[RMDB]
RNA sequence: GGGAACGACUCGAGUAGAGUCGAAAAUCACUUUGGGACGCUUAGAAUUUGAGCGGCUAAAUUUUGAGGUUUGGAAGAACCUGACGAACUGGUCGUGGCUCAAUUCAAUAUCUUUGAUGUCGUUUUUAAGAGUGAGUUCGAAUGAGAGUGGUCCUGGCUAGAUUGAGAGGUUCGCUUCUUAGUCUAGAAAAGAAACAACAACAACAAC
Reactivity to 2A3 in 0.01 (KOAc 150mM, MgCl2 10mM, bicine 150mM(pH8.5), 24C), signal-to-noise 6, nucleotides 027 to 156: u010c000a000c000u020u020u030g060g000g000a000c010g000c020u040u090a050g010a060a050u080u060u110g000a000g000c000g000g000c000u030a060a050a090u060u060u040u180g060a010g000g020u010u010u030g080g080a090a060g010a010a020c000c000u010g040a100c060g010a040a020c060u030g010g000u010c010g050u080g120g000c000u000c010a010a010u040u020c000a020a040u040a050u080c050u030u050u080g050a060u050g040u100c020g020u010u020u010u030u090a060a010g010a000g000u000g010a010g010u010u020c010g010a020a010u080g010a030g000a000g050u020g010g010u020c000c000u000g030g000
Reactivity to DMS in 0.01 (KOAc 150mM, MgCl2 10mM, bicine 150mM(pH8.5), 24C), signal-to-noise 5, nucleotides 027 to 156: u000c010a030c040u000u000u010g020g000g020a030c010g020c040u000u010a100g010a130a120u000u000u010g010a070g020c010g010g010c010u000a030a050a090u000u000u010u010g010a300g020g020u000u000u000g030g040a190a250g010a010a030c010c000u010g020a140c130g020a050a060c080u000g020g020u000c030g010u010g060g030c000u000c020a030a090u000u000c060a070a110u000a020u000c050u000u000u000g000a110u000g030u000c020g000u000u000u000u010u010a060a140g010a080g020u010g010a060g010u000u000c030g010a090a080u010g010a220g010a100g010u000g010g010u000c010c020u000g020g020